An RNA of 207 nucleotides, treated with 2A3 and DMS and read out base by base. The reactions ran in a buffer of 150 mM KOAc, 10 mM MgCl2 and 150 mM bicine (pH 8.5), at 24 C. Reactivities are given for positions 27 through 156. Source: RMDB library M2RFPK, as collected in RNAgym. In probing experiments dimethyl sulfate is read out at A N1 and C N3, which are open when not base-paired.
RNA sequence: GGGAACGACUCGAGUAGAGUCGAAAACAUUGUUCUGAUCAUCUGAAGAUCAGCUAUUAGAAGAGAAAGAUCAAUUAAGUCCUUUGGACCUGAUCAGCUUGAUACAAGAACUACUGAUUUCAACUUCAAAACGGGUGCUACUUCGGUAGCACCCGAAGAUAGUUUUCAUGUUCGCAUGAAAACUAUCAAAAGAAACAACAACAACAAC
Reactivity to 2A3 in 0.01 (KOAc 150mM, MgCl2 10mM, bicine 150mM(pH8.5), 24C), signal-to-noise 3, nucleotides 027 to 156: c040a050u110u150g030u080u010c000u010g010a000u010c020a030u010c050u090g080a120a030g020a050u010c010a020g010c000u080a110u280u140a070g070a140a010g060a030g070a120a090a020g040a050u050c030a040a040u120u130a130a010g020u020c020c000u060u140u230g030g010a030c000c030u040g000a020u010c010a010g080c050u010u030g010a010u050a100c080a130a040g020a040a010c030u070a020c050u110g040a140u050u070u120c070a130a090c050u160u110c100a040a080a040a070c030g000g000g010u000g010c000u010a000c000u030u050c130g100g000u000a000g000c000a000c010c000c000g000a000a000
Reactivity to DMS in 0.01 (KOAc 150mM, MgCl2 10mM, bicine 150mM(pH8.5), 24C), signal-to-noise 2, nucleotides 027 to 156: c080a170u000u000g030u000u000c000u010g030a050u010c020a070u000c090u000g010a180a180g010a070u000c000a040g000c140u000a080u000u000a120g020a110a140g000a200g000a130a110a070g020a070u010c020a070a120u000u010a100a060g000u010c010c010u000u000u000g020g010a030c030c000u000g010a080u000c060a110g000c040u020u000g010a210u000a170c090a050a050g020a090a060c020u010a070c070u000g010a050u000u000u000c010a030a210c050u000u010c030a030a100a090a160c020g000g030g010u000g000c000u000a020c010u000u000c170g010g000u000a000g020c000a030c000c000c000g000a010a010